About this RNA
Conditions: 150 mM KOAc, 10 mM MgCl2 and 150 mM bicine (pH 8.5), 24 C. Chemical mapping of a 177-nucleotide RNA with DMS and 2A3. The 2A3 profile rests on 2,279 reads.
[RMDB]
RNA sequence: GGGAACGACUCGAGUAGAGUCGAAAAUAUUUAGCCAUCAGUCCAUUCCAAAAAAUGAUGACUAAAAAUGAUGAUGAUAAUCCAACGACUGAGAAACCACCAAAGCGAAGUUUAUACGCUUUAAUUAGUGCCUUUCUUAUUUCGAUAAGAAAGGCACAAAAGAAACAACAACAACAAC
Reactivity to DMS in 0.01 (KOAc 150mM, MgCl2 10mM, bicine 150mM(pH8.5), 24C), signal-to-noise 1, nucleotides 027 to 126: u070a040u020u000u000a010g000c010c010a000u000c000a010g000u000c150c060a100u020u000c070c150a000a080a020a270a160a030u030g010a030u000g000a130c010u010a000a000a000a050a120u020g000a060u000g000a030u010g010a030u010a010a090u000c020c020a050a060c240g000a050c140u010g000a080g000a190a080a100c020c120a030c020c070a000a050a040g060c000g100a090a080g000u000u040u030a180u000a080c000g000c010u040u020u000a040a060u070u020a030
Reactivity to 2A3 in 0.01 (KOAc 150mM, MgCl2 10mM, bicine 150mM(pH8.5), 24C), signal-to-noise 4, nucleotides 027 to 126: u250a060u020u060u050a000g000c020c010a010u010c010a020g130u080c130c010a100u230u040c060c070a120a050a020a010a030a000u060g010a060u050g010a040c000u050a000a030a040a020a080u150g060a020u020g010a020u040g000a040u100a190a090u070c020c010a050a030c050g110a030c010u090g020a020g060a120a050a030c040c100a030c000c040a050a020a000g010c000g020a030a010g010u040u190u170a200u060a040c030g010c000u040u020u060a050a100u090u120a080
Description:
For DMS the reverse transcriptase was MarathonRT. Reactivities are given for positions 27 through 126.